Record summary: The record gives the reactivity of an RNA of 177 nucleotides to 2A3 and DMS. The DMS profile rests on 14,689 reads. For 2A3 the reverse transcriptase was SuperScript II with manganese. The reactions ran in a buffer of 150 mM KOAc, 10 mM MgCl2 and 150 mM bicine (pH 8.5), at 24 C.
RNA sequence: GGGAACGACUCGAGUAGAGUCGAAAAGCGGCGAUGCAGAGACGGUGGGCCAGCGUCUCUGGACUGGCCCUUAGUGCGAAGGCAGGUCCUGCUUACGCAUUUAGCCGCGAAUGCCUUUUGGCUAAAAGGGAUAGGGCAUGUUCGCAUGCUCUAUCCCAAAAGAAACAACAACAACAAC
Reactivity to 2A3 in 0.01 (KOAc 150mM, MgCl2 10mM, bicine 150mM(pH8.5), 24C), signal-to-noise 8, nucleotides 027 to 126: g010c000g010g000c020g060a050u080g050c030a010g020a000g010a100c020g070g090u120g070g010g020c010c000a020g010c000g060u010c020u030c030u100g040g050a060c050u040g050g040c000c000c000u020u050a050g000u040g040c040g020a050a020g050g000c020a010g070g210u130c030c020u020g010c010u040u040a040c040g000c010a000u020u020u100a010g000c000c000g000c000g020a040a030u110g010c000c000u070u170u130u220g030g010c020u040a020a030a070a140
Reactivity to DMS in 0.01 (KOAc 150mM, MgCl2 10mM, bicine 150mM(pH8.5), 24C), signal-to-noise 4, nucleotides 027 to 126: g020c010g010g000c010g020a100u010g000c000a060g000a070g030a020c020g000g030u010g020g010g010c010c020a100g000c010g010u020c010u010c080u000g010g000a070c070u010g010g000c000c000c010u010u020a020g030u000g020c020g010a110a060g000g000c000a050g020g000u030c140c030u000g020c030u020u030a190c020g010c010a010u010u010u010a190g020c000c010g000c020g010a060a050u020g000c010c020u000u030u050u060g010g010c020u020a040a040a120a140
DMS adducts were read by reverse transcription with MarathonRT.